This 207-nucleotide RNA was probed chemically with DMS. Reactivities are given for positions 27 through 156. The DMS profile rests on 2,003 reads. Conditions: 150 mM KOAc, 10 mM MgCl2 and 150 mM bicine (pH 8.5), 24 C.
RNA sequence: GGGAACGACUCGAGUAGAGUCGAAAAUUGGUUUUAUUGGGAAGCAUGUAUAAUUUUUGUCCUAAGUCUGUGCUCAGCCCUCCCACAUGUGCUCAUUGCUGGUUGACUGUUGGAGUCUGGUUCUUACCUCUAAGAGGAAGCCCAGGAGAGGGCAUAACUCAAGGUUACGAUUCGUCGUAACCUUGAGAAAAGAAACAACAACAACAAC
Reactivity to DMS in 0.01 (KOAc 150mM, MgCl2 10mM, bicine 150mM(pH8.5), 24C), signal-to-noise 1, nucleotides 027 to 156: u000u010g010g020u020u000u000u000a000u020u010g050g020g030a120a110g010c030a020u000g000u020a070u030a070a120u000u000u000u000u000g020u000c020c020u000a020a100g000u000c020u000g020u060g050c030u000c030a070g030c040c000c020u010c000c000c060a050c070a120u000g020u000g040c020u020c020a130u010u000g010c000u000g030g000u030u000g030a090c040u000g000u020u010g000g000a120g000u010c040u010g010g030u000u020c020u000u000a150c050c000u000c030u010a120a170g010a040g000g050a060a110g000c300c010c020a090g000g000a150g000a060g040g010g010c000a030u000a030a110